[RMDB]
Conditions: 150 mM KOAc, 10 mM MgCl2 and 150 mM bicine (pH 8.5), 24 C. Structure probing data (2A3 and DMS) for a 177-nucleotide construct. As a SHAPE reagent, 2A3 marks flexible, mostly unpaired nucleotides at the ribose 2'-OH. The 2A3 profile rests on 916 reads. For DMS the reverse transcriptase was MarathonRT.

RNA sequence: GGGAACGACUCGAGUAGAGUCGAAAACACUGCCACAAGGGCAAAAACAUGAUGCUGAAUGACAGAAUUCAGAACUUGAAUUCUCUUCAACACGUUCUGAGGAAGGCAGAGGAGUAUCUGACCACAGCCCAGCAAACUGAUUCGUCAGUUUGCUGGGAAAAGAAACAACAACAACAAC
Reactivity to 2A3 in 0.01 (KOAc 150mM, MgCl2 10mM, bicine 150mM(pH8.5), 24C), signal-to-noise 1, nucleotides 027 to 126: c000a050c040u000g000c000c000a060c020a070a070g170g030g040c050a080a060a020a000a040c070a040u120g130a130u070g130c040u020g080a110a060u130g080a080c040a130g000a020a040u070u000c020a000g070a180a090c110u080u020g000a020a000u060u040c070u030c000u100u040c000a020a000c010a020c070g030u110u050c020u010g060a040g090g010a190a140g060g000c000a000g050a030g090g020a080g010u060a050u100c040u100g030a080c000c000a010c000a110g030
Reactivity to DMS in 0.01 (KOAc 150mM, MgCl2 10mM, bicine 150mM(pH8.5), 24C), signal-to-noise 1, nucleotides 027 to 126: c100a070c060u010g050c020c000a150c150a090a210g000g030g000c040a060a040a160a050a040c140a200u000g030a090u010g000c010u000g000a010a000u010g030a060c250a090g000a080a020u000u000c000a090g020a170a060c110u000u000g040a060a030u000u000c130u010c020u000u000c050a020a000c120a000c080g010u020u000c010u000g010a110g000g000a140a080g000g030c010a000g000a030g000g000a090g000u000a040u000c030u000g030a130c050c090a040c110a020g000